Chemical mapping of a 177-nucleotide RNA with DMS and 2A3. The DMS profile rests on 2,625 reads. The RNA was probed in 150 mM KOAc, 10 mM MgCl2 and 150 mM bicine (pH 8.5) at 24 C. Reactivities are given for positions 27 through 126.
[RMDB]
RNA sequence: GGGAACGACUCGAGUAGAGUCGAAAAGAUAUGGAGCUAUACUAUUGGCGCACGUUGAAAUCGGAAACGAUGGAGUGCCUCAACGAAUAUAGCUCCUAAGUCAAACGAAUUCGUUCGCGAAUUCGAAGGAUAAAGUUCUGUUCGCAGAACUUUAUCCAAAAGAAACAACAACAACAAC
Reactivity to DMS in 0.01 (KOAc 150mM, MgCl2 10mM, bicine 150mM(pH8.5), 24C), signal-to-noise 3, nucleotides 027 to 126: g010a060u010a300u000g010g000a000g020c000u000a010u000a000c040u000a300u000u000g000g010c300g000c010a010c000g020u000u000g000a100a130a030u000c000g010g000a080a090a150c000g010a000u010g010g000a090g020u000g000c000c000u000c020a000a000c130g000a080a090u000a010u000a010g000c000u000c000c010u010a000a090g010u010c010a100a080a220c010g000a030a010u000u000c010g020u000u000c210g020c020g000a020a000u000u000c000g020a050a090
Reactivity to 2A3 in 0.01 (KOAc 150mM, MgCl2 10mM, bicine 150mM(pH8.5), 24C), signal-to-noise 3, nucleotides 027 to 126: g040a010u060a050u220g000g010a010g010c000u020a010u010a040c050u020a050u080u060g030g000c040g010c020a000c010g140u300u080g010a060a070a000u000c010g000g060a090a050a030c020g000a000u020g030g050a020g020u000g010c010c000u030c030a050a060c040g120a300a120u030a000u010a000g000c010u000c000c000u010a020a010g000u010c020a090a010a080c010g000a000a000u020u010c010g070u080u070c300g000c020g100a000a010u020u000c010g030a100a110
Source: RMDB library TTRDEL, as collected in RNAgym.